[RMDB]
RNA sequence: GGGAACGACUCGAGUAGAGUCGAAAACCUCACUACAUUUUACUGUUCCUAAAGACUUUGUGACAGGUACAGUAAAACGUAUUGCAAGGUUUAUCAGUUCCUAUAAACAGGUAAAUAACAAUAUAUGAAAAGCAAAGACUGUUCGCAGUCUUUGCAACCCUUGAGUGUGGUUCGCCACACUCAAGGGAAAAGAAACAACAACAACAAC
Reactivity to 2A3 in 0.01 (KOAc 150mM, MgCl2 10mM, bicine 150mM(pH8.5), 24C), signal-to-noise 1, nucleotides 027 to 156: c000c000u000c000a020c000u000a010c000a040u000u000u000u000a010c000u000g020u030u110c000c000u180a100a160a080g090a220c080u240u260u200g090u240g160a030c020a060g000g000u000a000c000a000g000u000a000a000a000a000c010g010u000a010u000u020g020c020a000a060g060g000u020u020u020a160u110c000a010g050u010u010c000c000u010a100u130a100a020a010c030a030g030g180u020a020a120a080u220a000a080c020a060a160u240a030u010a060u230g080a050a090a000a000g000c000a000a000a000g000a000c000u060g010u010u090c250g000c140a000g000u000c000u000u000u000g020c010a000a000